[RMDB]
RNA sequence: GGGAACGACUCGAGUAGAGUCGAAAACAGGCAAAAAGCGCGCUGGAAAAACCAGCUGCGCACGACAGCCAAACAAGCCGUGAAGUGCUGUCGAUGAAAUGAAAACACGGCAAAACAACAAACAAAACGACUGUCAUGGAUUCGUCCAUGACAGUCGAAAAGAAACAACAACAACAAC
Reactivity to 2A3 in 0.01 (KOAc 150mM, MgCl2 10mM, bicine 150mM(pH8.5), 24C), signal-to-noise 2, nucleotides 027 to 126: c030a020g130g050c050a050a110a040a060a060g000c010g000c000g000c000u030g000g020a040a000a080a000a130c000c000a000g000c090u210g000c010g000c000a000c000g000a000c000a000g000c030c000a020a070a000c070a000a120g000c000c010g000u010g020a070a020g020u030g050c000u000g000u000c010g000a030u140g110a010a050a000u050g020a010a000a020a000c020a000c000g030g000c020a010a050a000a050c050a010a010c020a030a150a000c040a000a130a000a010